[RMDB]
RNA sequence: GGGAACGACUCGAGUAGAGUCGAAAAGUCUAGCGAACGGAUCCCACCCGGGAGACACGCAAGUCGCGAAUUAGGCCGACCGGCCAAGGUCAAUCGCAGAACUCAACUGCAUGAGUAAGCUAGACGACCAUGACGACUAGUUCGCUAGUCGUCAUGGAAAAGAAACAACAACAACAAC
Reactivity to 2A3 in 0.01 (KOAc 150mM, MgCl2 10mM, bicine 150mM(pH8.5), 24C), signal-to-noise 2, nucleotides 027 to 126: g000u000c000u000a010g000c000g030a020a040c010g080g020a050u000c010c000c010a030c000c030c010g040g020g000a030g020a010c050a020c050g030c050a070a140g200u180c050g020c030g070a120a140u170u060a210g080g000c070c020g010a070c030c050g040g000c020c000a020a030g030g000u040c000a000a050u060c030g000c010a030g020a190a080c010u050c160a040a130c040u080g000c010a050u100g020a020g040u020a030a000g000c000u000a020g000a020c020g000a010
Reactivity to DMS in 0.01 (KOAc 150mM, MgCl2 10mM, bicine 150mM(pH8.5), 24C), signal-to-noise 2, nucleotides 027 to 126: g010u000c000u010a050g010c000g000a220a040c050g010g000a050u000c010c000c010a180c300c070c040g000g000g000a160g000a050c000a090c100g030c090a080a150g010u010c210g020c020g010a060a100u010u010a040g010g000c000c000g010a160c050c120g000g020c020c040a110a130g000g030u000c020a120a130u020c020g000c040a020g010a050a110c120u010c100a060a090c090u010g020c030a090u000g000a090g040u020a060a260g000c000u000a010g000a020c000g000a210